[RMDB]
RNA sequence: GGGAACGACUCGAGUAGAGUCGAAAAUUCAAUGAGGAUUUGAUUCGACUCUUACCUUGGCGACAAGGUAAGAUAGAUGAAGAGAAUAUUUAGGGGUUGAAACGCAGUCCUUCCCGGAGCAAGUAGGGAGUCUUCGUGAAUUCGUUCACGAAGACUCAAAAGAAACAACAACAACAAC
Reactivity to DMS in 0.01 (KOAc 150mM, MgCl2 10mM, bicine 150mM(pH8.5), 24C), signal-to-noise 2, nucleotides 027 to 126: u040u010c040a060a050u010g000a040g000g000a200u000u040u000g020a210u000u000c010g000a230c200u000c000u000u010a050c000c000u000u000g000g020c300g000a270c000a000a000g000g040u000a000a000g010a040u030a020g010a020u020g000a220a030g000a210g030a100a090u020a040u050u020u060a060g010g000g000g000u000u000g010a030a080a120c070g000c120a120g010u000c030c000u000u000c000c080c000g000g000a100g080c120a000a030g060u000a040g010g000
Reactivity to 2A3 in 0.01 (KOAc 150mM, MgCl2 10mM, bicine 150mM(pH8.5), 24C), signal-to-noise 1, nucleotides 027 to 126: u050u010c030a030a050u140g000a080g090g030a060u040u000u080g050a040u000u000c010g040a070c190u000c000u000u000a000c010c010u000u020g000g010c030g030a100c000a000a000g000g000u000a000a000g000a000u010a000g000a000u020g010a050a000g040a000g000a020a080u050a070u070u090u030a050g000g010g010g000u000u050g110a110a020a000c100g000c090a000g000u000c020c000u000u040c000c000c000g000g000a040g020c050a080a030g030u100a040g110g150